[RMDB]
This 207-nucleotide RNA was probed chemically with DMS and 2A3. For DMS the reverse transcriptase was MarathonRT. The data come from the RNA Mapping Database (RMDB), library M2RFOK. Values are in units of 0.01, from 0 to 300, in steps of 10. The DMS profile rests on 2,714 reads. The reactions ran in a buffer of 150 mM KOAc, 10 mM MgCl2 and 150 mM bicine (pH 8.5), at 24 C.
RNA sequence: GGGAACGACUCGAGUAGAGUCGAAAAAUCAGAGGGCGCUAUCAUGCAAACUAGGAUUGUCUGCUCAUGCACAGAACCAACUACCGAUAACUAACAGUGCAUGAAGGUUAGUUUUUCCAUAUUAAUUAAAACUCGUAAUUCUUCGGAAUUACGAGAACCCUAACACUAGGUUCGCCUAGUGUUAGGGAAAAGAAACAACAACAACAAC
Reactivity to DMS in 0.01 (KOAc 150mM, MgCl2 10mM, bicine 150mM(pH8.5), 24C), signal-to-noise 2, nucleotides 027 to 156: a200u000c020a130g020a110g040g010g020c220g020c030u010a130u000c070a070u000g040c020a070a160a120c060u000a110g000g010a150u000u000g000u000c040u000g000c000u000c040a060u000g020c020a080c040a060g000a060a160c040c020a050a090c090u000a300c050c050g020a120u000a070a070c060u000a100a080c070a130g020u010g000c000a030u000g010a070a170g020g000u000u000a020g010u000u010u010u000u000c000c010a140u000a130u010u000a050a070u000u000a040a030a050a090c000u000c000g010u000a060a020u000u000c010u010u020c300g020g010a010a000u020u010a000c000g010a000g010a010a040
Reactivity to 2A3 in 0.01 (KOAc 150mM, MgCl2 10mM, bicine 150mM(pH8.5), 24C), signal-to-noise 5, nucleotides 027 to 156: a000u070c040a020g030a030g050g000g000c010g000c040u090a130u300c080a080u300g000c040a020a030a040c010u010a040g050g030a060u030u030g030u070c030u060g030c010u020c010a020u010g020c020a010c010a040g050a150a040c050c000a060a040c050u140a120c080c040g110a100u060a130a060c010u030a040a030c020a060g020u010g040c000a000u020g010a030a010g060g010u020u060a000g000u000u030u000u060u040c040c000a080u150a060u210u200a150a080u100u130a030a050a050a100c000u000c000g000u000a030a000u000u000c000u020u000c070g090g000a010a000u000u000a000c000g000a000g000a000a000